[RMDB]
An RNA of 177 nucleotides, treated with DMS and 2A3 and read out base by base. For DMS the reverse transcriptase was MarathonRT. Source: RMDB library TTRDES, as collected in RNAgym. Reactivities are rounded to 0.1 and cut off at 0 and 3. The DMS profile rests on 2,807 reads. The 2A3 profile rests on 8,528 reads. Conditions: 150 mM KOAc, 10 mM MgCl2 and 150 mM bicine (pH 8.5), 24 C.
RNA sequence: GGGAACGACUCGAGUAGAGUCGAAAAGAUAUGGACUGUCUGUGACAUGUCCCACAUUCGGAAACGAAUGGAGGACAACAGCACAGGACAGUCCUAAGUCAAACCCUCGCUGUUCGCAGCGAGGGAAGAGAAUCAGUACGUUCGCGUACUGAUUCUCAAAAGAAACAACAACAACAAC
Reactivity to DMS in 0.01 (KOAc 150mM, MgCl2 10mM, bicine 150mM(pH8.5), 24C), signal-to-noise 3, nucleotides 027 to 126: g000a040u000a130u010g000g010a020c020u000g000u000c010u010g000u000g000a040c080a240u010g010u010c000c010c300a180c010a000u000u000c000g010g000a040a040a100c000g000a020a020u000g020g000a300g000g000a030c000a050a070c220a090g010c000a010c000a030g000g000a030c000a000g020u000c000c000u000a000a070g010u000c020a140a130a200c010c000c000u000c000g020c000u000g010u000u010c260g010c010a020g000c000g020a000g000g020g000a000a020
Reactivity to 2A3 in 0.01 (KOAc 150mM, MgCl2 10mM, bicine 150mM(pH8.5), 24C), signal-to-noise 4, nucleotides 027 to 126: g010a010u020a000u090g000g000a020c000u010g000u010c010u040g030u000g010a110c110a300u300g020u010c000c000c020a050c000a010u000u000c000g020g010a030a030a040c010g010a020a010u030g000g030a070g020g040a020c030a180a090c140a300g060c010a000c010a060g120g150a000c010a000g010u000c000c000u000a010a000g010u010c030a040a050a300c050c000c000u010c000g000c000u030g120u150u130c300g010c210a020g000c020g010a010g000g000g000a030a020